An RNA of 177 nucleotides, treated with 2A3 and read out base by base.
[RMDB]
RNA sequence: GGGAACGACUCGAGUAGAGUCGAAAAACUUUGAAACUUUCCUUUGUAUAUUACAUUAAUCCAUAUAAGAAAAUCUCUUUUAAUGAGGAGUGAUGUAGUUACAAACUCUCCAGAGCCAUAAUUAGAGAGCUACAGUCCUUUUCGAAGGACUGUAGCUAAAAGAAACAACAACAACAAC
Reactivity to 2A3 in 0.01 (KOAc 150mM, MgCl2 10mM, bicine 150mM(pH8.5), 24C), signal-to-noise 1, nucleotides 027 to 126: a000c050u210u070u160g060a090a100a100c050u000u010u000c000c000u060u060u020g020u000a080u000a040u200u000a010c000a000u020u020a050a000u030c000c000a060u060a040u020a270a000g070a000a070a210a210u120c020u000c000u000u000u070u000a210a000u160g060a060g080g000a000g060u060g000a040u020g000u000a000g010u000u000a000c000a100a060a020c020u040c020u010c160c050a080g000a050g050c000c040a120u060a130a000u140u060a060g120a020g000
The 2A3 profile rests on 375 reads.